[RMDB]
RNA sequence: GGGAACGACUCGAGUAGAGUCGAAAAGUGGAUCGGGUCCAGUGUUAGCUGCUUACUGGUCUGCCCAUUCCAAGCCGGGAGUUGGGCUGAGUGACCUGGGCGAAGGGCUGGGUUGCGCACGUCCUAGAGUGGAGGGCAAUGCGUGAGGCUGGCUUCACAUUCGUAAGAGGUUCGCCUCUUACGAAUGAAAAGAAACAACAACAACAAC
Reactivity to 2A3 in 0.01 (KOAc 150mM, MgCl2 10mM, bicine 150mM(pH8.5), 24C), signal-to-noise 3, nucleotides 027 to 156: g100u060g030g030a080u100c070g040g010g000u000c020c030a010g020u030g060u110u090a060g010c060u060g020c020u090u060a070c030u070g020g040u000c040u060g030c010c000c020a020u060u000c010c000a060a030g170c070c040g050g020g000a060g050u100u050g060g000g000c040u060g070a040g070u090g010a010c000c000u020g040g030g010c040g050a050a020g050g020g010c020u050g020g030g010u020u090g010c040g000c020a020c080g040u040c010c030u060a060g010a010g100u110g030g030a040g030g000g020c000a070a090u080g020c030g000u030g040a020g040g020c030u010g040g000c000u060u090c060a040
Reactivity to DMS in 0.01 (KOAc 150mM, MgCl2 10mM, bicine 150mM(pH8.5), 24C), signal-to-noise 1, nucleotides 027 to 156: g010u010g020g000a060u010c030g030g000g000u000c030c010a060g020u020g000u000u000a090g000c050u000g010c040u000u010a080c020u000g020g030u000c050u030g000c000c010c030a130u000u000c000c050a040a200g030c080c050g000g010g010a060g020u000u000g060g010g010c010u040g000a100g020u010g020a030c030c030u000g000g010g000c010g010a130a100g000g010g000c090u030g020g020g000u000u000g030c100g030c020a070c060g050u000c000c060u000a150g000a150g010u010g000g020a140g010g020g000c040a040a040u000g010c060g030u000g010a090g010g000c020u000g020g000c060u010u010c070a140